[RMDB]
RNA sequence: GGGAACGACUCGAGUAGAGUCGAAAAGAAUUUCAGCGUACUAGCGAACCAAUGUUAGAUGGAUAGCAAUGACUGUAGGCUAUCUUAUGCGUUCAGGUUGCGCAUUACGCUGAACUACAGUCAUGAGGAUCAUCGUGUUAUUCGUAAUAUGAUGAUCAAAAGAAACAACAACAACAAC
Reactivity to DMS in 0.01 (KOAc 150mM, MgCl2 10mM, bicine 150mM(pH8.5), 24C), signal-to-noise 9, nucleotides 027 to 126: g020a110a080u030u010u000c000a010g000c010g010u000a040c050u010a030g000c000g020a130a170c290c300a090a090u020g010u000u000a010g010a080u020g010g000a010u000a000g010c010a050a080u010g010a010c010u000g010u000a060g010g010c010u000a000u000c000u000u000a010u000g000c010g010u000u030c160a120g010g010u040u020g000c010g010c000a030u000u000a000c000g010c000u000g000a000a010c200u010a010c000a000g010u000c000a100u030g010a180g010
Reactivity to 2A3 in 0.01 (KOAc 150mM, MgCl2 10mM, bicine 150mM(pH8.5), 24C), signal-to-noise 9, nucleotides 027 to 126: g090a050a100u020u010u010c000a000g000c000g010u000a010c010u070a040g010c020g110a160a120c080c050a150a130u260g010u030u030a040g010a100u050g060g000a000u000a000g000c020a040a060u080g010a010c000u010g000u010a010g070g000c000u000a000u000c000u010u040a020u030g020c010g020u030u210c110a120g090g190u160u120g040c000g000c000a000u010u000a000c000g000c000u000g000a000a000c000u010a010c000a000g000u010c010a050u130g090a060g190
This 177-nucleotide RNA was probed chemically with DMS and 2A3. For 2A3 the reverse transcriptase was SuperScript II with manganese. The reactions ran in a buffer of 150 mM KOAc, 10 mM MgCl2 and 150 mM bicine (pH 8.5), at 24 C. For 2A3, 132,841 sequencing reads were counted. Reactivities are given for positions 27 through 126. The DMS profile rests on 61,882 reads.